[RMDB]
RNA sequence: GGGAACGACUCGAGUAGAGUCGAAAAGAAAGAAAGAAAGAAAUCUGACAGAAUGACGGAUUCGAUCGUUGUGGUCGACGGGCCACCACGUCAUUCCUUCGCACUGUCUCCGGGCAGACCGCCAUAAAAAAGCGGAUCUACUUCGGUAGAUCCGCAACUUUCCUCAACGGUUCGCCGUUGAGGAAAGAAAAGAAACAACAACAACAAC
Reactivity to 2A3 in 0.01 (KOAc 150mM, MgCl2 10mM, bicine 150mM(pH8.5), 24C), signal-to-noise 2, nucleotides 027 to 156: g020a000a030a030g050a000a050a050g050a030a090a040g090a070a180a080u130c110u110g010a010c010a020g120a170a170u080g010a020c010g000g030a010u060u060c070g020a080u260c030g010u020u020g010u000g010g010u010c020g060a060c070g030g040g000c000c000a000c020c010a000c000g010u010c000a010u000u020c010c000u040u030c010g000c040a020c020u000g010u000c010u010c060c040g040g000g000c000a020g050a130c010c070g000c050c020a040u280a080a190a010a010a010a000g000c000g010g000a000u030c000u000a000c010u030u100c170g050g000u000a000g000a000u000c000c000g020c000a000a000